[RMDB]
RNA sequence: GGGAACGACUCGAGUAGAGUCGAAAAGAUAUGGACUCCGAACUACACGUGGAAAGUUGCAUGGAGAGGGCUUCGGAAACGAAGCCUACCCACCUCCAUGACUUUCCACGUGCGGAGUCCUAAGUCACUUCAUCAGAAUCUUCGGAUUCUGAUGAAGAAAAGAAACAACAACAACAAC
Reactivity to DMS in 0.01 (KOAc 150mM, MgCl2 10mM, bicine 150mM(pH8.5), 24C), signal-to-noise 2, nucleotides 027 to 126: g010a020u000a300u000g010g000a030c000u000c020c000g000a130a020c080u010a300c040a010c000g010u030g000g000a040a020a020g000u000u000g010c010a020u000g000g000a040g010a150g000g000g010c000u020u000c000g000g000a160a090a290c030g040a000a000g000c000c000u010a010c070c030c150a300c140c000u000c000c000a040u000g000a060c000u010u000u000c020c000a000c010g000u000g020c000g000g000a030g000u000c000c000u000a000a010g010u000c040a290
Reactivity to 2A3 in 0.01 (KOAc 150mM, MgCl2 10mM, bicine 150mM(pH8.5), 24C), signal-to-noise 1, nucleotides 027 to 126: g040a020u090a070u200g000g000a010c020u060c010c000g000a090a030c120u300a050c300a000c020g010u010g040g060a010a000a020g050u240u300g300c010a010u010g000g050a000g040a020g030g020g000c000u000u000c030g020g000a070a090a060c050g000a000a000g000c000c010u000a000c000c000c000a050c020c000u020c020c000a000u010g030a000c010u000u000u000c010c010a020c010g030u020g020c000g020g000a000g000u000c000c000u000a030a000g000u000c020a010